This 207-nucleotide RNA was probed chemically with 2A3. The RNA was probed in 150 mM KOAc, 10 mM MgCl2 and 150 mM bicine (pH 8.5) at 24 C.

RNA sequence: GGGAACGACUCGAGUAGAGUCGAAAACGCACUGGUACGAUACGUCGUACCAGUGCAGUCGUUGGGAUGGAACGCAAUUAAAUACAUGUGUGACGUGUAUUUGCGAACGACGUAAUUAUUUUUCAAAAUCACGCUAUCGUGUUCGCACGAUAGCGAACGGUACAGUCAGGUUCGCCUGACUGUACCGAAAAGAAACAACAACAACAAC
Reactivity to 2A3 in 0.01 (KOAc 150mM, MgCl2 10mM, bicine 150mM(pH8.5), 24C), signal-to-noise 1, nucleotides 027 to 156: c160g040c000a000c000u000g000g000u000a030c030g000a040u030a130c280g170u020c000g000u000a000c000c000a000g000u000g010c000a000g000u020c000g030u040u040g230g000g050a130u080g070g060a150a020c110g000c020a000a070u190u160a080a040a000u010a040c040a050u010g030u050g150u160g300a160c000g000u000g000u000a020u000u030u070g020c030g030a040a000c000g010a000c030g000u010a080a020u100u160a160u120u270u000u010u040c150a050a060a000a030u110c020a060c030g000c000u000a000u000c000g000u030g020u000u030c040g020c070a000c000g000a000u000a000g000c000g000a020a000